[RMDB]
RNA sequence: GGGAACGACUCGAGUAGAGUCGAAAAAUCUUGGCGAAGUCAGCGGGGAAGGAGCGCGCAACUCCUUACCCUCGCCUUUUUUUUUCCGCUCCCGUUCGCGAAAGCGUUCAGCGGAAAAGGGACCAAAUUGAUGCUCAUGAUUCGUCAUGAGCAUCAAAAAAGAAACAACAACAACAAC
Reactivity to DMS in 0.01 (KOAc 150mM, MgCl2 10mM, bicine 150mM(pH8.5), 24C), signal-to-noise 1, nucleotides 027 to 126: a040u010c060u000u000g000g020c020g020a080a120g000u000c150a140g000c110g000g010g010g010a060a030g000g020a020g000c030g010c300g000c150a090a080c000u010c000c000u000u000a110c030c000c000u000c020g000c010c000u000u000u000u000u000u000u000u000u000c010c000g010c010u000c100c050c060g000u000u000c010g020c000g000a160a060a170g010c000g020u000u000c030a070g030c010g000g000a000a010a000a000g000g000g010a110c070c060a040a060a080

Structure probing data (DMS) for a 177-nucleotide construct. The reactions ran in a buffer of 150 mM KOAc, 10 mM MgCl2 and 150 mM bicine (pH 8.5), at 24 C. Source: RMDB library M2PK90, as collected in RNAgym. For DMS the reverse transcriptase was MarathonRT. Values cover nucleotides 27 to 126.